[RMDB]
Description: Structure probing data (2A3 and DMS) for a 177-nucleotide construct. The data come from the RNA Mapping Database (RMDB), library OK2TST. Conditions: 150 mM KOAc, 10 mM MgCl2 and 150 mM bicine (pH 8.5), 24 C.

RNA sequence: GGGAACGACUCGAGUAGAGUCGAAAACCGGCCUGCUGGGUCUGGUGCUGCCCCGCGAGAUCGGCGGAAUGGGUUCCGGACCAGUGGAAUUCACCGAGGUGGUCGCCCAGCUGUCGGCUGCAUGUGGACUUCUUUUCCAUUUCGAUGGAAAAGAAGUAAAAGAAACAACAACAACAAC
Reactivity to 2A3 in 0.01 (KOAc 150mM, MgCl2 10mM, bicine 150mM(pH8.5), 24C), signal-to-noise 4, nucleotides 027 to 126: c010c000g000g010c020c040u050g020c020u040g050g020g070u040c120u110g050g000u060g000c000u060g020c000c000c010c010g000c010g030a210g050a190u200c080g140g000c030g010g020a050a060u090g060g020g000u010u040c030c000g040g080a070c020c050a060g040u090g090g020a030a040u060u040c010a020c030c060g190a050g030g000u030g020g000u050c010g000c000c010c000a020g000c020u060g060u130c020g010g010c010u050g020c020a080u190g110u140g120g040
Reactivity to DMS in 0.01 (KOAc 150mM, MgCl2 10mM, bicine 150mM(pH8.5), 24C), signal-to-noise 6, nucleotides 027 to 126: c020c000g010g020c050c050u000g000c030u000g010g010g010u010c110u000g020g010u000g010c020u000g010c050c040c000c020g010c040g010a120g010a100u000c130g020g020c040g010g000a100a110u010g010g010g000u000u000c020c010g010g010a160c100c100a090g010u000g010g000a070a050u010u000c020a090c060c040g010a110g010g010u000g010g010u000c080g000c010c000c010a040g010c030u010g000u000c060g010g010c030u000g010c080a070u000g010u000g010g010